[RMDB]
RNA sequence: GGGAACGACUCGAGUAGAGUCGAAAAGAUAUGGACCGUUCCACUUUCAACAGCUCGGAAACGAGACAUGAAAUAAGUGGGCGGUCCUAAGUCAGCGCAUGUGUCGGAGUUCGCUCCGACACAUGAACAUAGUUAUACCGUUCGCGGUAUAACUAUGAAAAGAAACAACAACAACAAC
Reactivity to DMS in 0.01 (KOAc 150mM, MgCl2 10mM, bicine 150mM(pH8.5), 24C), signal-to-noise 9, nucleotides 027 to 126: g000a030u000a270u010g000g010a010c000c000g010u000u020c000c000a010c010u000u000u000c080a050a150c300a170g000c000u000c010g010g000a050a060a110c000g000a010g000a040c120a160u000g000a030a110a080u010a040a010g020u000g000g000g000c000g000g000u000c000c000u000a000a050g000u000c010a140g020c250g010c000a010u000g000u000g010u000c000g010g010a020g020u000u020c230g010c000u010c000c000g010a000c000a000c000a000u000g000a050a180
Reactivity to 2A3 in 0.01 (KOAc 150mM, MgCl2 10mM, bicine 150mM(pH8.5), 24C), signal-to-noise 8, nucleotides 027 to 126: g010a000u040a020u090g000g000a000c000c000g020u300u280c080c000a010c010u040u090u040c050a130a120c020a090g040c000u000c000g020g010a040a030a020c010g020a020g040a050c030a130u150g080a030a090a100u300a140a010g000u010g000g000g000c000g000g000u000c000c000u000a000a000g000u000c010a010g110c110g010c080a000u010g000u000g000u000c000g020g000a010g010u100u160c270g100c140u000c000c000g000a000c000a000c000a000u000g000a000a000